[RMDB]
Record summary
An RNA of 207 nucleotides, treated with 2A3 and read out base by base. Conditions: 150 mM KOAc, 10 mM MgCl2 and 150 mM bicine (pH 8.5), 24 C.
RNA sequence: GGGAACGACUCGAGUAGAGUCGAAAAGUCAACGAUCUCGGUUGUUUCUCUGAAGGCAUGAUCACCCCGUCCGAUGCGGAAGUUCGUGCUUCCGUCGAACGCGAAAGUCGGACGGCGGCCAUGAGUCAAUAUGUUUAAGGCUUCGGCCUUAAACAAAAUACCUGGUUCUGUUCGCAGAACCAGGUAUAAAAGAAACAACAACAACAAC
Reactivity to 2A3 in 0.01 (KOAc 150mM, MgCl2 10mM, bicine 150mM(pH8.5), 24C), signal-to-noise 2, nucleotides 027 to 156: g170u110c000a110a050c070g100a030u010c000u040c060g060g000u000u000g000u000u020u000c040u000c000u050g100a110a000g130g020c020a020u010g020a050u130c020a020c000c010c030c000g000u010c000c000g000a020u010g000c000g020g020a010a000g010u210u300c140g150u300g120c000u000u000c020c000g000u000c000g000a200a060c090g000c000g140a100a090a010g020u000c000g000g010a000c020g000g000c020g020g000c010c000a010u020g010a000g060u060c000a020a070u090a070u300g000u000u000u000a000a020g000g000c000u000u080c270g000g060c020c000u000u000a000a000a000c000a000a000a000